[RMDB]
RNA sequence: GGGAACGACUCGAGUAGAGUCGAAAAUAAUCUGUAAGCCAAAUUCACGUAAGAAUGGAUCAUAUUGAAAGCCAGCUUGCUCACAUAAUGAUGCAAUACGUUGUUCACGUGAAAUUGCAUCAACAGCGCGUAGCUACCCUUUCGAGGGUAGCUACGCAAAAGAAACAACAACAACAAC
Reactivity to 2A3 in 0.01 (KOAc 150mM, MgCl2 10mM, bicine 150mM(pH8.5), 24C), signal-to-noise 1, nucleotides 027 to 126: u120a000a050u100c090u030g060u060a170a000g200c000c050a020a010a020u240u220c050a000c030g030u020a150a000g000a000a300u050g000g000a000u060c000a000u170a150u160u270g010a170a050a020g030c020c000a000g070c000u020u020g000c060u080c020a050c000a250u110a260a090u020g000a000u000g000c000a020a020u000a280c000g000u000u000g280u270u170c120a000c050g000u000g100a030a060a000u030u030g000c000a000u000c000a070a070c000a090g300c020